[RMDB]
RNA sequence: GGGAACGACUCGAGUAGAGUCGAAAAGCGGAAAAGAGUGCGUGGUAGCACAAACCAGACCAAUCCGCGGCACACGGUCGCACAUGCACAGCUUCGCCUGUGCAAAGCGAACAAGGCGAACAAAGAACGCGUAUACCAUGUUCGCAUGGUAUACGCGAAAAGAAACAACAACAACAAC
Reactivity to DMS in 0.01 (KOAc 150mM, MgCl2 10mM, bicine 150mM(pH8.5), 24C), signal-to-noise 2, nucleotides 027 to 126: g010c010g040g000a080a100a080a080g020a170g020u000g000c060g000u000g070g000u000a270g000c090a020c130a120a070a070c030c110a050g000a160c010c060a170a150u010c000c000g050c000g000g010c060a090c020a170c300g000g010u000c000g010c020a040c200a180u040g000c000a000c010a000g040c020u020u030c230g020c190c000u020g000u020g000c000a000a040a090g020c000g000a030a090c000a070a250g000g000c000g000a040a050c130a060a080a040g000a090a060
Reactivity to 2A3 in 0.01 (KOAc 150mM, MgCl2 10mM, bicine 150mM(pH8.5), 24C), signal-to-noise 3, nucleotides 027 to 126: g000c050g010g030a030a000a020a040g130a070g030u090g100c090g070u160g060g000u120a030g060c090a030c020a100a100a010c030c030a010g080a030c010c000a010a080u010c000c000g000c000g000g030c040a010c010a000c130g020g080u010c000g020c000a060c000a120u000g000c000a000c000a010g000c000u220u200c100g020c040c000u000g000u000g070c000a000a000a010g000c000g020a020a010c060a090a020g070g000c020g040a020a020c100a030a160a020g100a060a020